[RMDB]
RNA sequence: GGGAACGACUCGAGUAGAGUCGAAAAGAUAUGGACGAAGGUAUUGGUGGGCAUAUUGUCAGCGAAAGCAUCGGAAACGAUGCGAUCGCUUGGAUUUAUAUGUAGUCAAUACCUUCGUCCUAAGUCAUCUGAAUAGGAUGUUCGCAUCCUAUUCAGAAAAAGAAACAACAACAACAAC
Reactivity to DMS in 0.01 (KOAc 150mM, MgCl2 10mM, bicine 150mM(pH8.5), 24C), signal-to-noise 2, nucleotides 027 to 126: g030a040u010a300u010g000g000a040c000g010a040a000g000g010u000a030u000u000g020g020u000g000g010g040c010a010u000a000u000u020g010u000c000a040g020c000g000a000a130a300g010c000a000u020c000g020g000a110a060a200c000g000a010u000g010c000g010a130u010c000g020c020u020u030g010g000a030u020u000u000a000u000a000u000g000u010a300g010u000c020a000a020u000a000c000c000u000u000c000g000u000c000c000u000a000a050g030u000c010a090
Chemical mapping of a 177-nucleotide RNA with DMS. Conditions: 150 mM KOAc, 10 mM MgCl2 and 150 mM bicine (pH 8.5), 24 C. The DMS profile rests on 1,564 reads. It was measured as part of the RMDB library TTRINS.